[RMDB]
RNA sequence: GGGAACGACUCGAGUAGAGUCGAAAAUGUCAUAGUUCGCUAUGACAAAAAAUCCUAAGUCGUGAGGCGAUAGACAUGGUCGUGUCGGAAACGACACAGACCAACAGCUAUCGCUCCCCACCACGAUAUGGAAAAAAGCAUGGUUUCGACCAUGCAAUAAUAUCAUCCUAUUCGUAGGAUGAUAUUAAAAAGAAACAACAACAACAAC
Reactivity to 2A3 in 0.01 (KOAc 150mM, MgCl2 10mM, bicine 150mM(pH8.5), 24C), signal-to-noise 5, nucleotides 027 to 156: u100g000u000c000a010u000a010g020u040u060c120g030c110u000a000u000g000a000c000a000a040a000a000a000a050u080c060c010u080a170a020g020u000c000g000u010g010a000g020g000c000g010a000u000a000g030a070c050a090u040g010g010u000c000g000u000g000u000c000g010g040a100a070a060c000g010a000c000a000c040a020g010a000c000c000a010a010c040a000g020c000u000a000u000c000g000c010u020c000c000c000c000a030c010c000a000c000g000a000u020a120u180g060g090a030a070a040a020a020a020g000c000a000u000g000g040u060u180u200c220g060a060c000c000a000u000g010c010a000a000
Reactivity to DMS in 0.01 (KOAc 150mM, MgCl2 10mM, bicine 150mM(pH8.5), 24C), signal-to-noise 4, nucleotides 027 to 156: u000g000u000c010a010u010a000g020u000u020c300g060c030u000a010u000g000a040c020a000a020a090a090a110a140u000c020c010u010a090a300g010u000c020g020u000g000a300g010g000c010g010a020u010a010g000a090c060a300u000g030g020u000c000g070u000g000u000c030g030g010a140a080a300c010g000a030c000a010c030a050g060a010c010c010a020a030c070a140g030c000u000a010u000c000g000c010u010c060c040c010c040a300c070c030a050c040g000a100u010a280u000g000g000a000a040a080a060a100a130g020c020a010u000g000g020u000u010u000c250g020a050c000c000a010u000g010c010a020a030